[RMDB]
RNA sequence: GGGAACGACUCGAGUAGAGUCGAAAAAUUACAAAUACCCUUUACAUCAUUGAGUCUGGAUCAAGAAGAAUUGAUGUAUCAUCAUAUGAUGGAGAACGAAGAACAGUUCUUCUUGCUGAUGGCCUUACGCUUUUAGCGAUUUCGAUCGCUAAAAGCGAAAAGAAACAACAACAACAAC
Reactivity to 2A3 in 0.01 (KOAc 150mM, MgCl2 10mM, bicine 150mM(pH8.5), 24C), signal-to-noise 2, nucleotides 027 to 126: a000u090u080a040c030a020a210a060u180a110c000c000c000u000u130u100a090c060a100u140c050a070u010u110g050a040g040u060c050u040g050g000a060u030c000a020a000g000a030a000g020a010a030u040u000g090a040u110g100u100a070u060c010a000u010c020a050u100a060u300g000a020u060g050g030a070g050a060a000c070g060a120a050g100a180a030c010a000g020u010u000c000u000u000c000u000u030g000c030u030g010a000u000g000g010c000c000u000u000a030
Reactivity to DMS in 0.01 (KOAc 150mM, MgCl2 10mM, bicine 150mM(pH8.5), 24C), signal-to-noise 1, nucleotides 027 to 126: a110u030u020a160c160a040a090a130u000a180c030c000c030u000u000u000a170c240a040u000c120a100u000u000g000a090g020u000c010u000g060g000a050u000c040a000a040g000a000a030g010a030a030u000u000g000a060u020g000u000a070u020c020a030u010c050a130u030a220u030g010a030u000g030g030a060g000a070a070c090g000a050a090g050a050a210c010a070g000u000u000c000u000u000c000u000u000g000c270u000g020a150u020g000g000c000c030u010u000a070